[RMDB]
An RNA of 177 nucleotides, treated with DMS and 2A3 and read out base by base. For 2A3, 16,070 sequencing reads were counted. For 2A3 the reverse transcriptase was SuperScript II with manganese.
RNA sequence: GGGAACGACUCGAGUAGAGUCGAAAAUGACAAGUCUAGAACGUUCCAACAAUUUCAAGCUUCUCCAGUUGUAUCGAAAUGGCAGUUGGAUUCGUACCCAUCUCGACACAAGACAUUGGUUGACCUAUCAUCCGAUAAUAUUCGUAUUAUCGGAUGAAAAAGAAACAACAACAACAAC
Reactivity to DMS in 0.01 (KOAc 150mM, MgCl2 10mM, bicine 150mM(pH8.5), 24C), signal-to-noise 9, nucleotides 027 to 126: u010g010a080c080a070a150g010u000c030u000a090g010a090a120c040g010u000u010c010c010a070a070c110a090a080u010u000u000c050a070a170g010c040u000u000c040u000c090c090a080g000u000u010g010u000a060u000c110g010a020a040a030u000g000g010c150a100g000u000u000g010g010a100u000u010c060g020u000a110c150c040c040a100u000c030u000c040g010a030c050a040c100a070a080g000a070c100a060u000u000g010g010u000u000g010a090c080c030u000a160
Reactivity to 2A3 in 0.01 (KOAc 150mM, MgCl2 10mM, bicine 150mM(pH8.5), 24C), signal-to-noise 8, nucleotides 027 to 126: u120g010a020c020a060a050g040u000c020u040a020g040a140a040c000g020u040u000c010c000a000a010c030a040a070u090u100u090c060a090a040g020c020u070u030c040u060c070c040a080g030u040u030g050u100a110u100c030g020a040a010a040u050g070g010c070a040g020u040u050g030g040a080u070u080c030g010u050a070c020c020c010a050u010c020u010c040g030a020c010a000c020a100a050g090a040c030a080u020u080g090g020u050u070g060a060c000c000u050a070
The RNA was probed in 150 mM KOAc, 10 mM MgCl2 and 150 mM bicine (pH 8.5) at 24 C.